Annotation: Structure probing data (2A3) for a 207-nucleotide construct.
RNA sequence: GGGAACGACUCGAGUAGAGUCGAAAAAUGCUAAGUGCCUGGUCUAAUAUCCCUAGGCAGGAAGUGACAGAGAAGUAUCCAGAUUCUGCCUCUUGUAGGCUCAACUGCAAGAUCCAAGCACUUAACCAUGUCACACAUUGCUGCUCACAUCAAGGGACCAGUCGGAGUAUUUCGAUACUCCGACUGGAAAAGAAACAACAACAACAAC
Reactivity to 2A3 in 0.01 (KOAc 150mM, MgCl2 10mM, bicine 150mM(pH8.5), 24C), signal-to-noise 1, nucleotides 027 to 156: a000u040g010c010u120a080a000g010u040g000c000c000u030g000g000u050c050u100a050a080u030a140u200c000c010c000u000a030g010g000c040a010g010g040a100a050g010u030g120a020c040a020g080a000g120a110a060g110u030a070u040c010c010a030g040a220u160u000c020u060g000c010c000u050c020u020u030g010u050a100g000g070c100u100c080a180a180c010u000g050c020a010a000g010a000u000c000c040a010a010g000c000a000c000u050u000a000a000c060c000a050u060g010u100c000a030c000a000c000a120u010u140g010c030u010g010c000u020c100a120c000a060u070c040a070a050g060g000g010a030

2A3 adducts were read by reverse transcription with SuperScript II with manganese.
The RNA was probed in 150 mM KOAc, 10 mM MgCl2 and 150 mM bicine (pH 8.5) at 24 C.
Source: RMDB library OK3TST, as collected in RNAgym.